Source: RMDB library TTRDES, as collected in RNAgym. Chemical mapping of a 177-nucleotide RNA with 2A3 and DMS. The reactions ran in a buffer of 150 mM KOAc, 10 mM MgCl2 and 150 mM bicine (pH 8.5), at 24 C. For DMS, 2,864 sequencing reads were counted.
[RMDB]
RNA sequence: GGGAACGACUCGAGUAGAGUCGAAAAGAUAUGGACUCGAAGACAGUGAGCACGAAGAACACUCUCGGAAACGAGAGUGGGAGUGCAUCAUCGAGAGUCCUAAGUCAAAGCAUCGUUCGCGAUGCAACGUACCUGGUUAGUUCGCUAACCAGGUACGAAAAGAAACAACAACAACAAC
Reactivity to 2A3 in 0.01 (KOAc 150mM, MgCl2 10mM, bicine 150mM(pH8.5), 24C), signal-to-noise 3, nucleotides 027 to 126: g040a000u100a050u170g000g010a010c000u000c010g050a140a030g090a060c140a150g170u090g150a050g050c020a000c030g200a300a030g000a050a000c010a000c010u000c000u000c000g000g010a090a050a010c010g000a000g000a010g010u000g010g000g000a010g000u020g000c030a300u070c010a020u080c030g080a070g000a010g080u000c000c010u000a070a010g030u020c060a180a040a030g000c000a000u020c000g060u090u100c280g030c030g130a010u000g010c010a000a020
Reactivity to DMS in 0.01 (KOAc 150mM, MgCl2 10mM, bicine 150mM(pH8.5), 24C), signal-to-noise 4, nucleotides 027 to 126: g000a060u020a300u010g000g010a050c000u000c010g000a100a150g040a100c300a130g010u010g030a250g000c000a010c000g000a130a200g010a170a190c000a020c000u010c000u000c010g020g010a060a050a180c010g010a000g000a010g000u000g000g000g000a060g020u000g020c000a140u000c010a070u000c000g010a260g000a030g000u000c000c030u010a020a090g010u000c040a150a110a160g020c000a010u000c010g020u000u010c300g010c000g000a010u000g010c020a040a060